[RMDB]
RNA sequence: GGGAACGACUCGAGUAGAGUCGAAAAGGCGUCUUCGCUGCCUCGGCCGCCUUGCACUGACCGGUAGCCGCCGUAAUAGCGGCAUUGUUCCCAUAAAAGGAUGUGGGUGUGGGUGGCGAAGUAGCAGCCAUAGCUGCUGAUUCGUCAGCAGCUAUGGAAAAGAAACAACAACAACAAC
Reactivity to 2A3 in 0.01 (KOAc 150mM, MgCl2 10mM, bicine 150mM(pH8.5), 24C), signal-to-noise 9, nucleotides 027 to 126: g110g020c030g070u040c030u050u040c030g000c010u010g010c000c000u030c020g140g060c010c010g010c010c010u040u140g020c050a050c070u080g080a070c010c030g020g010u030a040g000c010c010g000c010c000g020u040a050a050u110a160g010c000g010g000c000a000u010u130g010u030u020c000c020c010a020u150a020a160a010a010g090g030a090u140g050u160g160g000g080u040g030u110g030g020g000u010g010g000c010g000a000a000g000u040a020g000c030a010g040
Reactivity to DMS in 0.01 (KOAc 150mM, MgCl2 10mM, bicine 150mM(pH8.5), 24C), signal-to-noise 9, nucleotides 027 to 126: g000g010c050g000u000c030u000u000c060g020c010u000g010c010c010u000c080g010g010c020c010g010c010c020u000u010g030c080a080c080u000g010a090c080c050g010g010u000a130g020c000c010g020c000c050g020u010a130a100u010a100g010c000g010g010c010a060u010u010g010u000u000c010c010c010a120u010a050a090a090a100g000g010a110u010g020u010g010g000g020u000g010u010g010g010g020u000g000g010c000g010a020a030g020u000a130g020c030a170g010
The record gives the reactivity of an RNA of 177 nucleotides to 2A3 and DMS. Values cover nucleotides 27 to 126. It was measured as part of the RMDB library OK2TRN. For 2A3, 41,321 sequencing reads were counted.